[RMDB]
RNA sequence: GGGAACGACUCGAGUAGAGUCGAAAACGGCUAAGCUUUAAGACAACCAGUCUAACGGAUUGACCGCUUUUCCUCUUUGUCUUAUUUCAAAGUAUAGACCGUUUUGCUUAAUUCCACCGGUAUGGCCCACCUUGCGUGAUUUCGAUCACGCAAGGUGAAAAGAAACAACAACAACAAC
Reactivity to 2A3 in 0.01 (KOAc 150mM, MgCl2 10mM, bicine 150mM(pH8.5), 24C), signal-to-noise 4, nucleotides 027 to 126: c000g010g010c000u020a130a010g000c020u030u050u010a010a010g010a020c010a010a030c040c040a030g050u040c040u050a060a040c030g010g070a090u040u180g160a200c000c040g030c070u070u050u040u040c000c030u010c030u020u040u020g010u000c000u040u060a110u070u210u120c110a070a040a000g030u010a070u050a200g070a160c000c000g030u010u020u010u030g030c020u060u150a060a050u110u020c000c010a060c010c040g050g010u170a070u190g080g030c010c010
Reactivity to DMS in 0.01 (KOAc 150mM, MgCl2 10mM, bicine 150mM(pH8.5), 24C), signal-to-noise 4, nucleotides 027 to 126: c000g000g010c000u010a020a300g000c020u000u020u010a060a010g000a020c020a020a050c100c080a060g000u000c060u000a030a030c110g010g010a300u000u020g010a070c010c030g010c140u000u000u010u000c120c040u000c060u020u000u000g030u010c010u000u000a060u020u010u000c260a070a010a020g010u000a140u000a030g000a050c000c040g000u000u000u000u000g000c150u000u010a090a090u010u000c020c010a080c120c050g000g010u020a050u010g010g010c090c070
Record summary: Conditions: 150 mM KOAc, 10 mM MgCl2 and 150 mM bicine (pH 8.5), 24 C. This 177-nucleotide RNA was probed chemically with 2A3 and DMS.